[RMDB]
RNA sequence: GGGAACGACUCGAGUAGAGUCGAAAACGUCGUGAACUAGCGACAAUGCAUUAGGUCCAUCGUUAUCUAACCGAAACAUCGUGACUAGUGCUAGAAUAGAACCACGAGAGGACGCUGGCAAACAAAGAAGGAGUGUAUUAUUCGUAGUACGCUCCUUAAAAGAAACAACAACAACAAC
Reactivity to DMS in 0.01 (KOAc 150mM, MgCl2 10mM, bicine 150mM(pH8.5), 24C), signal-to-noise 9, nucleotides 027 to 126: c120g000u000c010g020u000g010a130a130c130u020a100g000c020g000a070c040a110a110u020g000c010a030u010u010a030g000g000u010c010c010a090u010c090g000u000u010a150u000c030u010a070a100c280c090g000a070a090a070c040a050u010c130g020u030g010a090c070u020a060g010u010g000c010u010a140g000a080a160u010a040g000a060a100c110c070a030c020g000a040g000a080g000g000a010c020g010c030u000g000g000c050a060a070a090c150a050a070a090g010
Reactivity to 2A3 in 0.01 (KOAc 150mM, MgCl2 10mM, bicine 150mM(pH8.5), 24C), signal-to-noise 9, nucleotides 027 to 126: c050g000u000c000g000u020g070a120a070c060u020a060g010c000g020a010c000a010a030u050g000c010a020u020u050a020g020g070u010c010c000a030u020c040g010u010u050a120u070c030u040a020a070c030c020g030a030a030a010c030a030u060c040g060u070g070a050c030u030a020g030u010g050c010u010a020g050a070a070u080a030g020a030a010c030c000a010c010g010a010g010a040g040g010a000c000g000c020u010g000g000c000a030a050a020c020a020a090a020g120